[RMDB]
RNA sequence: GGGAACGACUCGAGUAGAGUCGAAAAGAAUCAUGUCGGAAUGGCGAACCCUUCCAGAGUUUCCUGACUACGAGAUCACCUCUGAUGGUGAUGUGCGUAACAAGGAAACGUUCUACGUACUAAAAGAAAUCCAGAACAAGAACACCGGAGCUUGGUCUAGUUGAUAAUGCUUCGGCAUUAUCAACUAAAAAGAAACAACAACAACAAC
Reactivity to 2A3 in 0.01 (KOAc 150mM, MgCl2 10mM, bicine 150mM(pH8.5), 24C), signal-to-noise 3, nucleotides 027 to 156: g070a020a030u140c060a040u100g060u070c020g030g020a090a070u130g040g030c050g010a040a040c020c000c000u010u030c050c010a050g030a010g050u010u000u010c000c000u020g050a060c060u010a000c000g020a000g000a040u000c000a000c110c020u160c160u300g180a230u280g010g000u000g010a010u000g040u140g010c010g000u010a030a040c070a070a000g000g000a000a020a000c000g010u070u000c020u030a040c020g070u040a060c050u100a040a110a130a040g080a030a100a010u040c040c030a020g030a110a040c020a090a000g060a060a020c040a030c060c090g040g020a020g020c040u050u050g010g040u050c030
Reactivity to DMS in 0.01 (KOAc 150mM, MgCl2 10mM, bicine 150mM(pH8.5), 24C), signal-to-noise 2, nucleotides 027 to 156: g000a170a120u010c050a050u000g000u010c060g010g020a090a100u000g010g020c050g020a040a170c050c030c000u020u010c000c020a270g000a140g000u000u010u000c000c010u010g040a240c270u010a020c030g020a040g030a030u000c000a010c040c000u000c050u000g020a090u010g020g060u020g020a010u000g030u000g020c000g000u000a010a170c160a210a060g010g010a010a020a010c020g020u010u020c040u010a140c060g010u000a170c020u000a060a050a080a090g030a090a070a120u010c000c080a110g010a050a090c040a030a110g010a070a060c050a300c000c010g040g020a060g020c030u000u000g030g000u010c010